[RMDB]
RNA sequence: GGGAACGACUCGAGUAGAGUCGAAAAAGACAGAAGGAUUCUAUACAAACUUGAAAUGUCUUUUGACUUUAUAUUUGAAAAUGUGUGUGCAUGUGCAUUCAUGAAGUGGAGAGAAAUGAUAAAUGCUCAUUUCCAUACAGUUCGCUGUAUGGAAAUGAAAAGAAACAACAACAACAAC
Reactivity to DMS in 0.01 (KOAc 150mM, MgCl2 10mM, bicine 150mM(pH8.5), 24C), signal-to-noise 2, nucleotides 027 to 126: a040g000a050c010a010g000a080a090g000g000a150u000u000c120u000a150u030a150c170a080a070a080c080u000u000g000a090a090a120u000g010u000c000u000u000u000u010g000a100c010u000u000u010a020u010a100u020u010u020g020a060a030a080a070u010g020u020g000u010g010u000g010c030a080u020g020u000g010c020a040u010u000c080a050u000g000a030a100g020u000g000g000a070g000a070g000a020a070a050u000g000a080u020a050a060a060u000g000c200u000
Reactivity to 2A3 in 0.01 (KOAc 150mM, MgCl2 10mM, bicine 150mM(pH8.5), 24C), signal-to-noise 1, nucleotides 027 to 126: a000g000a000c010a000g050a030a010g090g000a100u130u040c060u150a190u100a230c080a080a070a110c020u040u070g010a070a080a070u040g000u020c000u000u050u000u050g000a020c010u040u160u030a210u140a180u160u090u100g070a080a030a050a040u090g000u040g020u010g010u010g000c030a040u010g090u060g100c020a040u020u060c000a000u040g010a020a040g030u040g010g050a040g010a010g030a030a040a000u180g040a010u090a100a110a020u030g030c010u000
Background
Chemical mapping of a 177-nucleotide RNA with DMS and 2A3. For 2A3, 753 sequencing reads were counted. Source: RMDB library RFMREP, as collected in RNAgym. 2A3 adducts were read by reverse transcription with SuperScript II with manganese.